[RMDB]
RNA sequence: GGGAACGACUCGAGUAGAGUCGAAAAUGCGGGAAUCGGUCGGCCUUCGCCACAUCGCCACCGAAGAGGAGUUGUGGAGCCGUUUACGCCACAUCAUGACUCGCGAAGAGUUCGAUGCCGCCGCCGCGCUCGUUUUGGAAUUCGUUCCAAAACGAGCAAAAGAAACAACAACAACAAC
Reactivity to DMS in 0.01 (KOAc 150mM, MgCl2 10mM, bicine 150mM(pH8.5), 24C), signal-to-noise 1, nucleotides 027 to 126: u010g010c060g000g000g000a150a060u000c080g020g010u020c070g020g000c020c230u020u010c210g040c060c120a070c140a060u010c010g010c030c030a140c160c080g000a070a180g000a160g040g000a100g030u000u020g020u010g010g020a090g020c030c090g000u000u000u000a100c070g000c000c050a150c030a020u030c050a070u000g020a070c010u010c060g010c160g020a040a050g000a060g000u000u010c220g000a030u000g000c080c050g000c060c020g030c010c030g000c130
Reactivity to 2A3 in 0.01 (KOAc 150mM, MgCl2 10mM, bicine 150mM(pH8.5), 24C), signal-to-noise 1, nucleotides 027 to 126: u160g040c000g000g000g050a070a100u160c010g050g100u010c020g030g040c000c000u110u140c060g100c010c020a040c010a040u060c010g080c050c040a050c070c110g060a070a040g020a060g060g060a060g010u000u020g000u030g000g010a020g090c060c010g060u000u020u050a170c090g070c070c000a020c000a030u000c010a030u210g040a040c000u000c010g050c070g060a130a080g000a020g030u130u120c050g020a000u070g040c010c000g000c000c010g030c020c000g040c030

Overview: Chemical mapping of a 177-nucleotide RNA with DMS and 2A3. The DMS profile rests on 793 reads. The 2A3 profile rests on 901 reads.